The record gives the reactivity of an RNA of 177 nucleotides to DMS and 2A3. Conditions: 150 mM KOAc, 10 mM MgCl2 and 150 mM bicine (pH 8.5), 24 C. The DMS profile rests on 1,787 reads. As a SHAPE reagent, 2A3 marks flexible, mostly unpaired nucleotides at the ribose 2'-OH. 2A3 adducts were read by reverse transcription with SuperScript II with manganese.
[RMDB]
RNA sequence: GGGAACGACUCGAGUAGAGUCGAAAACGUGUCUCCGAUAUCAUCAAUCAAGAGCUGGAUGUUGCUGGUAUCAACCACUUGCUGCCUUGGUCUUGGUGGGGAAGGAGAUCUAUGGAGGGCGCCUGUCCAUGAAUGGGGGCUUCGGCCCCCAUUCAUGAAAAGAAACAACAACAACAAC
Reactivity to DMS in 0.01 (KOAc 150mM, MgCl2 10mM, bicine 150mM(pH8.5), 24C), signal-to-noise 2, nucleotides 027 to 126: c070g020u010g020u000c000u000c000c010g020a240u190a020u000c010a000u000c000a050a020u010c070a010a070g000a180g010c000u000g030g030a020u010g000u020u000g030c070u000g030g000u000a080u070c090a050a100c040c030a140c010u000u080g000c010u000g000c080c000u020u050g000g000u020c200u000u000g010g010u000g000g000g010g000a080a300g010g010a040g000a040u020c180u020a080u000g020g010a100g000g010g030c000g000c080c010u000g000u040c110
Reactivity to 2A3 in 0.01 (KOAc 150mM, MgCl2 10mM, bicine 150mM(pH8.5), 24C), signal-to-noise 2, nucleotides 027 to 126: c050g050u070g050u050c030u000c010c000g050a000u010a000u110c050a000u020c000a000a030u020c000a000a010g010a020g060c020u050g080g060a160u130g080u120u030g000c120u140g060g050u130a110u270c030a070a110c000c030a060c030u080u090g040c020u010g010c000c020u010u020g070g000u050c010u140u020g030g030u020g000g000g040g010a000a080g000g000a010g020a000u000c010u060a140u130g100g000a040g000g000g060c020g000c020c040u030g030u120c060